Structure probing data (2A3) for a 177-nucleotide construct.
2A3 adducts were read by reverse transcription with SuperScript II with manganese.
It was measured as part of the RMDB library OK1LIB.
RNA sequence: GGGAACGACUCGAGUAGAGUCGAAAAGCACAGUUACCUGAGACGUUUUAGCAACGAGUGUAUAACAUCCUGACGUACACGAUGGACACACGUGGGAGUUGUUUACAUUUCAGAUAACUGUCGACCGGGCCGUGAGAUGGUUCGCCAUCUCACGGCCAAAAGAAACAACAACAACAAC
Reactivity to 2A3 in 0.01 (KOAc 150mM, MgCl2 10mM, bicine 150mM(pH8.5), 24C), signal-to-noise 2, nucleotides 027 to 126: g000c030a000c060a000g000u000u000a010c000c000u010g000a010g010a000c030g000u050u050u160u260a070g110c080a050a000c000g030a000g130u070g010u000a060u030a190a050c010a130u010c020c080u100g190a030c040g020u040a000c090a000c180g040a100u060g020g080a000c000a000c010a000c080g040u180g010g000g010a240g000u040u060g000u000u010u000a000c000a000u000u040u110c000a000g000a000u000a000a000c010u000g000u000c000g000a000c040c020g000